[RMDB]
RNA sequence: GGGAACGACUCGAGUAGAGUCGAAAAUCCACAGUUCCACAUAACAAGAACUUACUGGCCCAAGAAAGAGCUUUAUUGGCUCUGAUAACUGAAAAGUUCAGUCACAUGUGGAUUGAUGGGCACAGACUAAAUUCGAUGACUUCGGUCAUCGAAUUUAAAAAGAAACAACAACAACAAC
Reactivity to DMS in 0.01 (KOAc 150mM, MgCl2 10mM, bicine 150mM(pH8.5), 24C), signal-to-noise 2, nucleotides 027 to 126: u000c030c010a300c070a030g000u000u000c000c000a040c030a090u030a140a090c120a080a120g010a030a010c010u010u000a090c040u000g020g000c090c030c030a080a080g000a050a170a030g010a010g000c000u010u010u000a130u020u020g000g010c000u000c000u000g030a080u010a020a060c120u000g000a080a090a020a060g000u000u000c000a140g020u000c240a080c150a070u010g040u010g000g020a010u000u000g000a120u000g000g000g020c170a110c080a070g010a120c210
Reactivity to 2A3 in 0.01 (KOAc 150mM, MgCl2 10mM, bicine 150mM(pH8.5), 24C), signal-to-noise 1, nucleotides 027 to 126: u000c000c000a000c010a020g040u010u050c000c010a000c000a040u000a150a030c070a090a150g020a040a010c030u050u020a060c010u070g150g000c010c000c000a020a000g130a070a030a000g000a010g000c010u250u300u210a200u300u300g010g000c000u000c000u020g000a010u000a070a000c040u030g070a070a000a030a030g000u000u000c030a020g160u070c030a040c000a090u020g070u050g030g000a030u000u070g070a100u010g000g010g000c130a070c030a080g130a010c050